[RMDB]
Conditions: 150 mM KOAc, 10 mM MgCl2 and 150 mM bicine (pH 8.5), 24 C.
This 177-nucleotide RNA was probed chemically with 2A3 and DMS.
The 2A3 profile rests on 3,095 reads.
It was measured as part of the RMDB library TTRDEL.
Reactivities are given for positions 27 through 126.
For 2A3 the reverse transcriptase was SuperScript II with manganese.

RNA sequence: GGGAACGACUCGAGUAGAGUCGAAAAGAUAUGGACCACACAGACGCAUCCCUGUAUCGGAAACGAUACAGAACUGAACUACGUCGUGUGGUCCUAAGUCAAAGUCGUCCUGUUCGCAGGACGACAACACUCGGAGUGUGUUCGCACACUCCGAGUGAAAAGAAACAACAACAACAAC
Reactivity to 2A3 in 0.01 (KOAc 150mM, MgCl2 10mM, bicine 150mM(pH8.5), 24C), signal-to-noise 2, nucleotides 027 to 126: g010a000u000a000u030g000g000a000c000c020a000c010a000c010a060g030a020c040g050c110a170u040c020c010c020u000g000u000a000u010c000g000g000a020a020a010c000g000a000u010a010c010a000g010a030a020c110u160g050a130a100c220u300a140c300g000u000c000g000u010g010u000g030g000u000c000c000u010a020a000g000u010c000a030a100a000g020u000c000g000u030c000c000u030g000u030u100c300g060c030a000g020g000a000c000g030a000c000a000a010
Reactivity to DMS in 0.01 (KOAc 150mM, MgCl2 10mM, bicine 150mM(pH8.5), 24C), signal-to-noise 1, nucleotides 027 to 126: g000a020u000a140u000g000g000a000c000c010a000c000a000c010a170g020a000c020g030c130a040u010c290c210c000u000g000u000a000u000c000g020g000a050a030a030c010g000a020u000a000c000a000g010a050a050c230u000g020a060a130c300u000a080c000g010u000c000g020u000g030u000g040g000u000c000c000u000a000a040g000u010c000a070a030a090g000u000c000g030u000c000c000u000g010u010u000c110g060c010a010g000g010a010c000g000a010c000a050a130